[RMDB]
RNA sequence: GGGAACGACUCGAGUAGAGUCGAAAAGGUGCUUCAAAGUAGUACUAGAAGAUGGCUGCAUGAGGAUCUGUCUCUUUAAAAAAGCACAACACGGAGGUCUAAGGGAAAUUUAUGUGCUUCGCCUGGACCUAGUACGGGCUUUCGAGCCCGUACUAGGAAAAGAAACAACAACAACAAC
Reactivity to DMS in 0.01 (KOAc 150mM, MgCl2 10mM, bicine 150mM(pH8.5), 24C), signal-to-noise 2, nucleotides 027 to 126: g060g000u000g000c030u010u010c050a150a080a100g070u020a020g030u050a170c060u010a120g020a030a120g000a060u000g000g040c030u030g030c060a020u030g020a040g000g050a050u000c030u000g010u020c000u000c010u020u020u050a020a000a010a070a080a020g000c080a010c120a080a090c100a080c030g000g000a020g010g000u030c050u010a090a050g020g020g010a030a070a070u030u020u000a050u010g020u000g000c090u000u010c100g020c080c010u000g000g020a300
Reactivity to 2A3 in 0.01 (KOAc 150mM, MgCl2 10mM, bicine 150mM(pH8.5), 24C), signal-to-noise 3, nucleotides 027 to 126: g100g000u060g010c000u090u020c060a120a140a000g040u030a020g020u020a120c080u070a080g030a180a040g080a150u130g080g030c010u010g020c070a050u060g030a060g020g040a050u050c000u000g030u040c020u000c000u050u140u160a020a130a050a010a020a000g080c050a010c030a160a000c010a020c070g090g020a020g000g080u060c060u080a080a100g150g010g100a100a030a030u110u170u100a180u140g030u060g030c030u030u050c030g010c020c000u010g040g030a020